[RMDB]
Notes:
An RNA of 177 nucleotides, treated with 2A3 and DMS and read out base by base. The RNA was probed in 150 mM KOAc, 10 mM MgCl2 and 150 mM bicine (pH 8.5) at 24 C. For 2A3, 17,561 sequencing reads were counted. Source: RMDB library OK2TRN, as collected in RNAgym. Values cover nucleotides 27 to 126.
RNA sequence: GGGAACGACUCGAGUAGAGUCGAAAACAUGGACAGCAUCUCCAUGAACGGGACAGUGAUCGCUUGUAAACGUGGCUGCCAGGCCCUCAUGGAUACAGGGACUGCCUUCCUGCGUGGCCCAAGAGGACAUACGCUAAUGGUUCGCCAUUAGCGUAUGAAAAGAAACAACAACAACAAC
Reactivity to 2A3 in 0.01 (KOAc 150mM, MgCl2 10mM, bicine 150mM(pH8.5), 24C), signal-to-noise 8, nucleotides 027 to 126: c020a040u060g030g020a010c010a050g040c020a110u040c020u000c050c010a020u040g030a050a030c070g000g000g040a010c020a060g030u030g070a090u070c040g030c070u090u110g110u220a070a060a030c040g050u060g030g000c000u020g040c030c020a050g050g030c000c010c000u040c030a100u140g090g030a030u060a150c070a060g010g020g060a040c030u060g010c010c010u020u050c010c010u020g020c040g060u050g050g020c000c010c020a020a020g100a040g050g030a010
Reactivity to DMS in 0.01 (KOAc 150mM, MgCl2 10mM, bicine 150mM(pH8.5), 24C), signal-to-noise 8, nucleotides 027 to 126: c080a040u010g010g010a040c110a070g010c100a100u000c080u000c010c010a030u000g000a080a100c160g010g010g000a060c060a050g000u010g000a060u000c060g020c030u000u010g010u000a080a090a110c090g010u000g020g010c020u000g000c110c040a090g000g000c020c020c020u010c040a080u010g020g000a120u000a080c170a080g000g010g010a060c050u000g000c100c030u010u000c030c010u000g010c070g020u000g010g010c030c050c030a060a090g000a110g010g010a250